The record gives the reactivity of an RNA of 177 nucleotides to DMS and 2A3.
[RMDB]
RNA sequence: GGGAACGACUCGAGUAGAGUCGAAAAGACAGGUAGUGAUCAGAGAUUUCACGCCGCUUGACGCGCGACAUGCCCGCGACGCUAAGGCCGAAUUCAACGUUCUGACGCACGGUAAGCCAAGGAAACAAGCCAUUUUAAUGUUCGCAUUAAAAUGGCUAAAAGAAACAACAACAACAAC
Reactivity to DMS in 0.01 (KOAc 150mM, MgCl2 10mM, bicine 150mM(pH8.5), 24C), signal-to-noise 4, nucleotides 027 to 126: g000a070c080a090g000g000u000a050g030u000g010a110u010c060a110g000a160g020a110u010u010u000c040a060c110g020c030c030g000c140u010u010g010a070c060g030c040g010c020g010a090c100a100u000g010c110c040c020g000c020g000a110c060g030c030u000a050a100g000g020c030c060g000a060a060u010u000c080a080a160c120g010u010u010c010u000g010a060c120g010c050a060c070g000g010u000a040a080g010c010c040a080a160g010g020a090a060a070c200a070
Reactivity to 2A3 in 0.01 (KOAc 150mM, MgCl2 10mM, bicine 150mM(pH8.5), 24C), signal-to-noise 2, nucleotides 027 to 126: g080a040c080a020g070g040u150a060g010u130g060a120u040c050a040g070a020g020a200u030u030u050c030a020c030g000c000c020g040c030u040u090g030a070c000g000c000g000c000g050a040c020a120u150g030c000c000c060g040c000g020a110c020g000c020u110a070a020g030g000c010c010g030a040a030u100u050c020a100a010c080g090u080u040c000u030g040a020c030g000c040a020c030g050g010u030a110a000g060c000c020a050a010g120g030a070a120a000c070a110

Conditions: 150 mM KOAc, 10 mM MgCl2 and 150 mM bicine (pH 8.5), 24 C.
2A3 adducts were read by reverse transcription with SuperScript II with manganese.
It was measured as part of the RMDB library OK2TST.
For DMS, 3,011 sequencing reads were counted.
Values cover nucleotides 27 to 126.